Annotation
Source: RMDB library OK1LIB, as collected in RNAgym. The record gives the reactivity of an RNA of 177 nucleotides to DMS and 2A3. Values cover nucleotides 27 to 126.
[RMDB]
RNA sequence: GGGAACGACUCGAGUAGAGUCGAAAAGAAUGUAAGGGCGUAAUCGCGCCUUGACGUGAGUGAGACAAGACAGAAGGCUAUCCAAAGUAAGAUAGCAUAGCUCACAAUACGCUGAUCUGUCCUAGAACAGGUGGUGAGGGUUCGCCCUCACCACCUGAAAAGAAACAACAACAACAAC
Reactivity to DMS in 0.01 (KOAc 150mM, MgCl2 10mM, bicine 150mM(pH8.5), 24C), signal-to-noise 1, nucleotides 027 to 126: g020a020a200u020g060u000a010a130g030g000g000c000g030u000a000a220u080c030g080c000g020c090c000u000u000g040a100c000g000u010g010a150g000u000g000a080g020a190c010a300a150g020a220c300a010g000a080a200g010g000c000u010a020u000c000c130a060a180a140g020u150a080a190g000a000u010a000g030c000a100u140a040g010c000u000c000a030c100a260a040u000a050c090g030c070u000g000a060u010c110u000g000u000c000c000u000a060g000a020a130
Reactivity to 2A3 in 0.01 (KOAc 150mM, MgCl2 10mM, bicine 150mM(pH8.5), 24C), signal-to-noise 1, nucleotides 027 to 126: g160a020a020u120g000u090a000a110g000g000g000c000g000u190a150a240u090c190g000c000g200c210c000u000u000g000a010c000g000u000g080a070g000u000g000a000g000a000c090a140a100g000a000c000a020g180a150a290g060g000c000u000a000u000c000c000a290a000a000g140u100a150a000g000a000u000a000g070c030a000u000a000g090c000u000c000a090c000a000a000u270a000c030g080c000u060g140a190u150c000u000g130u000c000c020u170a010g000a190a000